[RMDB]
RNA sequence: GGGAACGACUCGAGUAGAGUCGAAAAAUAUUUUGUUGUCGCCGGGUUGAGGAGCGACCAAAUCCUUCACCUAGCCCGAGCCUUGGCAGCAAACGACAGAAACCUGCCUCAGACAACGUCUUGGUCAAAAAUGGUCGUCAUUCGUGACGACCAUUUUAAAAGAAACAACAACAACAAC
Reactivity to DMS in 0.01 (KOAc 150mM, MgCl2 10mM, bicine 150mM(pH8.5), 24C), signal-to-noise 1, nucleotides 027 to 126: a040u000a030u090u000u000u000g000u000u000g080u000c000g030c040c000g000g020g000u000u060g000a000g010g010a000g000c000g050a080c090c110a010a090a100u010c000c050u000u000c150a050c000c030u010a110g000c000c090c050g000a290g010c040c130u030u000g000g000c000a000g000c080a070a110a020c020g060a110c100a080g060a190a110a140c220c030u000g000c000c000u030c090a190g000a010c010a150a080c040g030u050c230u000u110g020g000u040c080a040
Reactivity to 2A3 in 0.01 (KOAc 150mM, MgCl2 10mM, bicine 150mM(pH8.5), 24C), signal-to-noise 1, nucleotides 027 to 126: a000u140a170u000u000u040u080g000u000u000g000u010c020g000c100c000g080g000g000u050u000g020a080g020g000a060g000c040g040a040c020c000a030a030a030u120c000c000u000u000c060a190c040c020u000a050g140c000c000c000g050a170g020c070c120u070u190g030g000c010a010g040c030a040a030a030c110g180a000c000a150g200a020a090a040c000c040u030g000c010c000u160c040a160g060a000c020a050a000c130g120u000c080u080u050g060g000u010c020a010
This 177-nucleotide RNA was probed chemically with DMS and 2A3. The RNA was probed in 150 mM KOAc, 10 mM MgCl2 and 150 mM bicine (pH 8.5) at 24 C. Source: RMDB library OK1LIB, as collected in RNAgym. Reactivities are given for positions 27 through 126. For DMS, 809 sequencing reads were counted.